An RNA of 177 nucleotides, treated with DMS and 2A3 and read out base by base. For DMS the reverse transcriptase was MarathonRT. The reactions ran in a buffer of 150 mM KOAc, 10 mM MgCl2 and 150 mM bicine (pH 8.5), at 24 C.

RNA sequence: GGGAACGACUCGAGUAGAGUCGAAAAUAGUGAUGGUUCAUGAACAUCGGCCGGGUUAUCGGCAGCAGGACACCUACCGAGAUCACCGCCACCACCAGGGCAACGGCCGCUAGCGCAUAGACGAGCCCUAUUAUGUAGGAUUCGUCCUACAUAAUAGAAAAGAAACAACAACAACAAC
Reactivity to DMS in 0.01 (KOAc 150mM, MgCl2 10mM, bicine 150mM(pH8.5), 24C), signal-to-noise 9, nucleotides 027 to 126: u010a090g010u000g010a050u000g010g010u000u000c110a100u010g010a100a090c090a080u000c040g010g010c020c040g010g010g010u000u000a090u000c030g000g010c030a050g010c090a090g000g010a080c110a060c100c020u000a070c040c020g010a060g000a110u010c060a080c070c050g010c030c020a070c050c030a060c070c060a070g000g000g010c040a070a100c070g000g000c030c030g010c070u000a040g010c130g010c060a070u000a070g010a070c060g000a130g010c020c040
Reactivity to 2A3 in 0.01 (KOAc 150mM, MgCl2 10mM, bicine 150mM(pH8.5), 24C), signal-to-noise 3, nucleotides 027 to 126: u160a020g100u070g060a060u060g050g050u080u100c050a050u160g060a090a020c020a060u050c010g020g000c040c020g030g030g000u090u080a150u150c020g040g000c020a010g030c040a020g050g070a020c020a060c060c010u030a040c010c010g030a020g000a070u070c030a010c050c030g030c020c010a030c010c000a020c010c030a040g000g030g000c030a040a030c030g020g000c010c010g000c020u030a030g030c030g010c070a060u040a070g070a080c050g020a020g020c010c000